[RMDB]
RNA sequence: GGGAACGACUCGAGUAGAGUCGAAAAGGAUGUUUGCAUUCUUGCGUCAAUGCAAACAUGAUUGGCUUCGUCGAGAAUUGACGCAAGAAUUCUCAGUCAAGCGGCACAAUGACCGACGAAGCCAAGACUAACUGCUUUGUGCCGCUAGUGGUUAGGAAAAUUUUAUUACCUUCGGGUAAUAAAAUUUAAAAGAAACAACAACAACAAC
Reactivity to 2A3 in 0.01 (KOAc 150mM, MgCl2 10mM, bicine 150mM(pH8.5), 24C), signal-to-noise 3, nucleotides 027 to 156: g060g020a040u050g020u040u030u040g000c010a000u000u020c040u090u080g030c020g020u030c030a010a010u000g010c010a030a010a000c020a010u100g080a160u050u110g000g000c010u000u000c010g010u000c010g010a020g070a230a080u100u030g030a050c030g010c070a000a010g020a020a080u190u070c090u060c070a040g070u060c040a080a010g000c000g000g000c010a000c000a010a180u090g040a040c040c040g000a010c010g000a000a000g000c000c000a000a000g000a000c000u030a100a020c040u020g020c010u020u010u020g000u010g000c000c000g000c010u010a000g010u010g030g020u030u060a060g060g000a030
Reactivity to DMS in 0.01 (KOAc 150mM, MgCl2 10mM, bicine 150mM(pH8.5), 24C), signal-to-noise 2, nucleotides 027 to 156: g020g000a020u000g010u000u000u010g010c010a060u000u010c010u000u000g000c050g010u000c040a080a020u000g020c000a030a040a050c030a030u010g000a130u010u020g000g020c020u000u000c020g010u000c000g020a150g000a110a120u000u000g020a050c050g000c040a080a230g000a050a090u000u000c040u010c060a200g000u000c040a090a060g000c000g010g000c000a040c030a070a110u000g010a170c060c020g010a030c020g020a030a010g020c000c000a000a020g000a120c060u000a060a080c050u010g000c060u000u000u000g030u000g020c050c000g000c020u000a010g030u010g000g030u000u000a110g010g000a070